RNA sequence: GGGAACGACUCGAGUAGAGUCGAAAAGGUGGAAUUUGGCAGCUAGAAAUCAUUGCUCACUUCUCUGAGAACUUAGACUUGGCUGGGUCACAGUGCCUUUGCCUCUAAUUUCUCAAUGGUCUAGUCUUCCUCUGGGGGUGGGAAGUAAAAUAAAGUGCACUAUGUAGCCCUUCGGGGCUACAUAGUGAAAAGAAACAACAACAACAAC
Reactivity to 2A3 in 0.01 (KOAc 150mM, MgCl2 10mM, bicine 150mM(pH8.5), 24C), signal-to-noise 2, nucleotides 027 to 156: g060g000u020g010g060a080a160u070u040u140g110g000c040a010g000c040u070a040g040a050a200a030u090c030a080u050u110g020c010u030c050a040c040u080u020c080u080c070u040g000a030g000a010a010c000u010u030a000g050a050c040u160u180g000g020c000u000g000g000g040u000c070a110c100a260g130u220g130c010c030u100u160u160g000c000c000u010c000u010a010a000u000u000u030c000u010c000a010a070u070g010g000u010c020u020a010g020u010c000u040u010c000c020u060c020u050g000g000g020g010g000u040g010g000g010a040a030g040u150a040a140a030a030u140a060a080a010g080u050g030